This 177-nucleotide RNA was probed chemically with 2A3 and DMS. DMS adducts were read by reverse transcription with MarathonRT.
RNA sequence: GGGAACGACUCGAGUAGAGUCGAAAAGGGCGCCACCCAUGAGGGCGAUAUGCACGAUUACCGGCGCUCGGUGUCGGUCUGGUUCCGCUCGAUCUGGAUGCUAGCGCCGCGUGGCGAUCUGAUGGCCCGUUGUAAAGGGGUUCGCCCCUUUACAACGAAAAGAAACAACAACAACAAC
Reactivity to 2A3 in 0.01 (KOAc 150mM, MgCl2 10mM, bicine 150mM(pH8.5), 24C), signal-to-noise 3, nucleotides 027 to 126: g030g000g000c020g000c010c000a020c030c020c010a050u110g070a120g010g040g020c030g060a140u080a090u300g030c030a030c100g050a050u080u170a060c040c020g000g030c030g000c040u040c050g000g010u030g010u010c000g000g030u000c020u040g070g020u180u040c050c120g040c030u040c020g040a050u000c030u110g260g000a020u030g010c010u030a000g010c000g000c000c020g000c040g010u030g000g000c000g030a230u060c050u050g050a080u140g110g040c020c000
Reactivity to DMS in 0.01 (KOAc 150mM, MgCl2 10mM, bicine 150mM(pH8.5), 24C), signal-to-noise 5, nucleotides 027 to 126: g010g020g010c020g010c050c030a030c030c230c070a070u000g000a250g010g000g020c000g000a110u010a040u020g020c050a070c050g010a150u000u000a090c300c010g000g010c030g000c040u000c100g040g020u000g010u000c020g010g010u000c030u010g010g010u000u010c160c180g000c050u000c230g000a050u010c040u010g030g000a030u000g000c010u000a030g000c010g010c010c000g000c110g010u010g000g010c010g010a060u000c020u000g010a160u000g010g000c000c010
The reactions ran in a buffer of 150 mM KOAc, 10 mM MgCl2 and 150 mM bicine (pH 8.5), at 24 C.